Source: RMDB library OK1LIB, as collected in RNAgym. Chemical mapping of a 177-nucleotide RNA with 2A3 and DMS.
[RMDB]
RNA sequence: GGGAACGACUCGAGUAGAGUCGAAAAGCGGAAAAGAGUGCGUGGUAGCACAAACCACACCAAUCCGCGGCACAAGGUCGCACAUGCACAGCUUCGCCUGUGCAAAGCGAACAAGGCGAAGAAAGAAAGUCAGGAUAGCAUUCGUGCUAUCCUGACUAAAAGAAACAACAACAACAAC
Reactivity to 2A3 in 0.01 (KOAc 150mM, MgCl2 10mM, bicine 150mM(pH8.5), 24C), signal-to-noise 2, nucleotides 027 to 126: g000c000g040g010a120a020a050a000g180a090g010u090g060c210g010u020g000g050u020a030g150c080a000c050a200a050a000c000c000a000c000a000c000c010a000a080u010c000c010g000c010g000g000c030a070c000a220a050g070g050u060c030g000c000a040c010a140u030g000c000a000c000a000g040c010u230u200c030g040c030c020u000g000u000g010c000a000a000a000g000c000g000a030a020c010a010a000g010g020c020g060a030a040g040a010a040a010g110a080a090
Reactivity to DMS in 0.01 (KOAc 150mM, MgCl2 10mM, bicine 150mM(pH8.5), 24C), signal-to-noise 2, nucleotides 027 to 126: g000c030g020g000a010a110a070a210g000a220g000u000g000c190g000u000g000g000u000a050g080c300a250c300a080a080a010c020c010a010c000a040c000c080a160a230u000c010c000g000c000g040g000c000a040c060a050a300g000g050u000c000g020c060a080c060a290u000g010c000a030c000a010g030c010u090u020c080g000c140c000u000g000u000g000c000a040a070a050g000c010g020a000a000c040a160a130g000g000c000g010a100a100g000a150a100a080g000a170a090
2A3 adducts were read by reverse transcription with SuperScript II with manganese.